[RMDB]
RNA sequence: GGGAACGACUCGAGUAGAGUCGAAAAGAAAGAAAUGAUGCUGAUCUGGAAUGACACGUUUUCUCCCGGAUCGCCAGAAAUAUGUUUCGCCACCGGGAACUUCGUGUCAGCCAAGAUUGGCAUCAAAUCGAAUAAAUUGAUUCGUCAAUUUAUUCGAAAAAGAAACAACAACAACAAC
Reactivity to 2A3 in 0.01 (KOAc 150mM, MgCl2 10mM, bicine 150mM(pH8.5), 24C), signal-to-noise 9, nucleotides 027 to 126: g150a020a090a010g090a010a090a060u090g000a000u000g000c000u010g000a000u000c000u000g020g040a230a290u020g020a000c000a000c010g000u000u000u010u010c160u010c010c000c020g010g020a210u110c070g020c040c020a020g140a050a050a010u300a110u200g220u030u040u040c030g010c020c010a030c000c000g000g000g000a000a000c000u010u010c000g000u000g000u000c000a000g010c000c000a010a080g000a000u000u000g000g000c000a000u000c000a000a000a000
Reactivity to DMS in 0.01 (KOAc 150mM, MgCl2 10mM, bicine 150mM(pH8.5), 24C), signal-to-noise 8, nucleotides 027 to 126: g010a100a100a090g000a090a090a150u010g010a010u000g010c000u000g000a010u000c000u000g000g000a110a100u000g000a010c000a010c010g000u000u010u010u000c160u000c000c010c000g010g000a080u020c200g020c060c110a130g010a030a040a090u040a090u030g010u000u000u000c040g000c300c110a100c000c000g000g010g000a030a030c030u000u000c000g020u000g000u000c000a010g000c050c000a020a040g000a010u000u000g000g000c000a000u000c000a010a040a090
Source: RMDB libraries RFM100 and RFMREP, as collected in RNAgym. An RNA of 177 nucleotides, treated with 2A3 and DMS and read out base by base. The RNA was probed in 150 mM KOAc, 10 mM MgCl2 and 150 mM bicine (pH 8.5) at 24 C.